[RMDB]
RNA sequence: GGGAACGACUCGAGUAGAGUCGAAAAGCAAGAGCGUUCGCGCUCUUGCAAAGAAAAUGCGUCCAAAGGGUGAGGAUGGGAAGGACGCAAUACCCACACCCAAAACACUCUGCUUCGGCAGAGUGAACACGUAGGAAUAGUUCGCUAUUCCUACGUGAAAAGAAACAACAACAACAAC
Reactivity to 2A3 in 0.01 (KOAc 150mM, MgCl2 10mM, bicine 150mM(pH8.5), 24C), signal-to-noise 6, nucleotides 027 to 126: g010c000a000a000g000a000g000c010g020u080u100c180g020c000g040c100u000c000u000u000g010c000a010a000a000g020a000a080a000a020u060g000c000g000u000c010c010a140a140a100g050g010g030u080g040a070g100g040a130u130g080g030g040a080a080g040g000a000c010g000c010a000a010u090a060c000c000c000a020c010a030c000c020c000a030a080a000a010c010a000c000u010c000u000g010c010u030u060c160g080g000c000a000g000a000g000u000g000a010a010
Reactivity to DMS in 0.01 (KOAc 150mM, MgCl2 10mM, bicine 150mM(pH8.5), 24C), signal-to-noise 5, nucleotides 027 to 126: g000c000a010a000g020a010g010c000g040u000u010c260g040c020g010c000u000c000u000u010g010c000a030a030a070g000a060a050a100a060u000g000c000g010u000c000c010a120a120a140g010g000g010u000g000a130g000g030a200u000g000g000g010a150a210g010g000a010c000g020c020a030a040u000a070c000c010c010a110c060a090c020c000c030a080a110a080a150c030a010c000u000c000u000g000c000u000u010c190g040g010c000a000g000a020g000u000g000a030a110